Source: RMDB library TTRINS, as collected in RNAgym. Chemical mapping of a 177-nucleotide RNA with DMS and 2A3. Values cover nucleotides 27 to 126.
RNA sequence: GGGAACGACUCGAGUAGAGUCGAAAAGAUAUGGACAGAACUACACGGGGAGUACGCGUUGAAAGCGGAGGAAAUCGGAAACGAUUUCCUCCGCUGGAGCGUAUGAAAGACGUGCUGUCCUAAGUCACUUGAGUUAGUAGUUCGCUACUAACUCAAGAAAAGAAACAACAACAACAAC
Reactivity to DMS in 0.01 (KOAc 150mM, MgCl2 10mM, bicine 150mM(pH8.5), 24C), signal-to-noise 4, nucleotides 027 to 126: g000a040u000a300u020g000g000a040c000a010g000a100a030c060u020a300c020a030c020g020g010g010g020a300g010u000a010c000g000c000g000u020u030g020a160a120a040g010c020g010g020a010g000g000a000a000a000u000c000g030g000a080a100a190c010g020a020u000u000u000c000c000u010c010c000g000c000u000g000g000a080g010c010g000u010a000u000g000a160a170a210g010a110c010g000u000g000c020u000g000u000c000c000u000a030a060g010u000c060a280
Reactivity to 2A3 in 0.01 (KOAc 150mM, MgCl2 10mM, bicine 150mM(pH8.5), 24C), signal-to-noise 1, nucleotides 027 to 126: g030a010u090a050u240g000g000a000c010a020g040a150a120c180u300a110c300a070c000g080g000g100g000a180g030u000a000c020g070c010g100u150u140g060a300a170a000g080c020g000g000a000g040g040a010a000a020u000c010g060g030a130a030a060c030g020a000u000u000u000c000c000u020c000c040g050c000u000g000g000a000g080c010g010u010a000u040g050a000a070a080g300a020c000g010u000g070c010u010g000u000c000c000u020a060a010g050u010c020a030